[RMDB]
RNA sequence: GGGAACGACUCGAGUAGAGUCGAAAAAUCGGAUCUUGAGGUCAAGGACGGAUUCAAAUAUGUCGACGGAUCGACAUCGGAAGAUGUAACCGAUGUAUCCGAUGAUUCCUCUCUCAUAGAUUCCACACAGUAUGCGGAUCUUCGGAUCCGCAUACUGAAAAGAAACAACAACAACAAC
Reactivity to DMS in 0.01 (KOAc 150mM, MgCl2 10mM, bicine 150mM(pH8.5), 24C), signal-to-noise 1, nucleotides 027 to 126: a020u020c140g000g030a060u050c020u000u030g000a110g000g020u000c210a100a010g000g010a040c070g010g020a180u070u030c130a050a090a160u010a070u000g000u000c070g000a160c140g010g000a030u000c070g000a040c010a020u000c000g020g000a060a070g050a200u000g000u050a150a120c030c010g020a040u000g000u000a010u000c020c010g000a090u010g000a130u000u000c010c000u010c120u000c040u000c000a100u010a000g040a180u000u000c000c030a120c030a250
Reactivity to 2A3 in 0.01 (KOAc 150mM, MgCl2 10mM, bicine 150mM(pH8.5), 24C), signal-to-noise 1, nucleotides 027 to 126: a010u110c060g000g020a020u000c040u020u170g020a040g080g060u080c120a140a110g000g030a080c070g040g030a010u060u130c120a010a140a030u280a050u130g060u030c030g040a100c040g020g000a110u060c090g000a010c000a020u020c010g010g040a090a050g120a220u200g040u180a080a090c000c000g000a000u000g000u030a010u000c000c000g020a030u050g000a020u040u000c000c000u000c020u000c000u000c030a060u080a050g080a130u080u040c000c040a010c000a000